[RMDB]
RNA sequence: GGGAACGACUCGAGUAGAGUCGAAAAUGGGGCGUGGCAAGGUGGUUGGCUGUCAAUGGACUGCCCCCGGCAUUAGUUUAAAGCCAGAUAGGAGGGCCACGUCCAUUCGAAAAACUGUGGACGCCGACCACCUAUGCUCGUUCGCGAGCAUAGGUGGAAAAGAAACAACAACAACAAC
Reactivity to DMS in 0.01 (KOAc 150mM, MgCl2 10mM, bicine 150mM(pH8.5), 24C), signal-to-noise 2, nucleotides 027 to 126: u040g010g030g020g020c060g000u020g000g000c140a060a030g000g000u030g000g040u000u000g000g000c000u040g000u010c000a060a010u000g000g000a040c030u000g040c020c000c000c010c000g020g000c000a040u010u050a140g060u040u040u060a020a110a080g030c000c000a220g000a070u070a220g000g000a130g000g030g060c090c220a100c190g010u000c000c000a000u010u010c070g000a020a090a120a100a090c300u050g020u050g000g010a030c010g010c000c000g010a040
Reactivity to 2A3 in 0.01 (KOAc 150mM, MgCl2 10mM, bicine 150mM(pH8.5), 24C), signal-to-noise 2, nucleotides 027 to 126: u160g020g010g030g000c050g040u130g020g020c020a010a140g000g000u050g030g000u100u030g000g010c000u000g110u050c030a000a090u050g160g050a000c030u070g000c000c000c090c000c000g000g000c000a080u130u080a110g140u170u290u160a150a080a000g000c000c000a010g100a080u160a080g070g050a090g000g080g040c020c000a040c030g010u000c000c000a000u000u090c000g110a040a030a030a030a030c030u110g010u280g220g000a000c010g000c010c010g000a000
Chemical mapping of a 177-nucleotide RNA with DMS and 2A3. For DMS the reverse transcriptase was MarathonRT. The RNA was probed in 150 mM KOAc, 10 mM MgCl2 and 150 mM bicine (pH 8.5) at 24 C.